An RNA of 177 nucleotides, treated with 2A3 and DMS and read out base by base. The RNA was probed in 150 mM KOAc, 10 mM MgCl2 and 150 mM bicine (pH 8.5) at 24 C. For 2A3 the reverse transcriptase was SuperScript II with manganese.
RNA sequence: GGGAACGACUCGAGUAGAGUCGAAAAGAUAUGGACUUGGCUAGAGGGUUUCGCUGACUUAGUGUACUUUCGGAAACGAAAGUACACUAAGGUGGAGAAACCUCCCCACCUAGCAAGUCCUAAGUCAGACACAUAAUAGGUUCGCCUAUUAUGUGUCAAAAGAAACAACAACAACAAC
Reactivity to 2A3 in 0.01 (KOAc 150mM, MgCl2 10mM, bicine 150mM(pH8.5), 24C), signal-to-noise 2, nucleotides 027 to 126: g050a030u120a070u200g000g010a000c010u030u040g300g240c000u000a000g010a030g010g020g020u000u020u010c050g040c060u060g050a060c000u020u000a000g000u000g000u010a010c000u010u030u000c020g000g020a090a060a070c020g010a000a000a020g000u000a010c000a020c010u010a000a000g000g000u010g000g010a060g000a010a010a010c000c000u030c010c000c010c000a040c000c000u000a000g000c000a000a000g000u000c000c000u030a170a020g080u010c070a050
Reactivity to DMS in 0.01 (KOAc 150mM, MgCl2 10mM, bicine 150mM(pH8.5), 24C), signal-to-noise 5, nucleotides 027 to 126: g020a050u000a300u010g010g010a020c010u000u010g020g030c000u000a010g010a180g040g000g010u000u000u000c010g000c010u010g010a030c000u000u000a010g010u000g000u000a000c010u000u000u000c000g010g000a140a120a260c010g010a010a010a020g010u000a000c010a000c010u010a000a010g010g020u010g000g010a040g000a000a030a010c010c010u000c020c020c010c030a300c100c000u000a010g000c010a030a010g010u000c000c010u000a020a080g010u000c080a230
Reactivities are given for positions 27 through 126.